The record gives the reactivity of an RNA of 177 nucleotides to DMS and 2A3. The data come from the RNA Mapping Database (RMDB), library RFMREP. The DMS profile rests on 1,980 reads. For 2A3, 1,944 sequencing reads were counted. Reactivities are given for positions 27 through 126.

[RMDB]
RNA sequence: GGGAACGACUCGAGUAGAGUCGAAAAUGUGUUUAUGUAAGAGGAGCCGUACCUGUUGGUAUGUCUCAUUAUAAUGACACUACCUUCUUAAAUGGACAAAUUGCGUCUAGCAAUAAUGAGAUUGAGCCAAACAACUUAGCUUCGGCUAAGUUGUUUGAAAAGAAACAACAACAACAAC
Reactivity to DMS in 0.01 (KOAc 150mM, MgCl2 10mM, bicine 150mM(pH8.5), 24C), signal-to-noise 3, nucleotides 027 to 126: u010g000u000g010u000u000u010a110u030g010u000a040a040g000a200g020g010a010g010c040c010g020u000a010c000c000u010g030u020u010g040g030u010a020u000g010u000c000u000c000a030u010u010a010u000a050a150u000g000a010c000a020c010u000a180c060c030u000u000c080u000u000a030a080a080u010g000g000a100c160a040a060a080u000u000g030c020g020u010c160u020a110g000c040a030a010u000a040a140u000g010a160g010a110u000u000g010a150g000c170
Reactivity to 2A3 in 0.01 (KOAc 150mM, MgCl2 10mM, bicine 150mM(pH8.5), 24C), signal-to-noise 3, nucleotides 027 to 126: u110g020u000g020u030u050u060a090u100g010u000a040a020g070a040g220g050a010g000c010c000g000u000a010c000c010u110g200u300u300g050g000u010a000u030g030u000c000u000c000a010u020u010a010u000a030a140u060g010a010c000a000c010u040a050c030c000u070u090c010u030u140a130a130a050u140g030g010a010c030a010a180a090u020u040g000c030g040u100c150u120a060g000c010a000a050u130a040a070u100g030a030g010a070u050u120g100a030g020c040
Conditions: 150 mM KOAc, 10 mM MgCl2 and 150 mM bicine (pH 8.5), 24 C.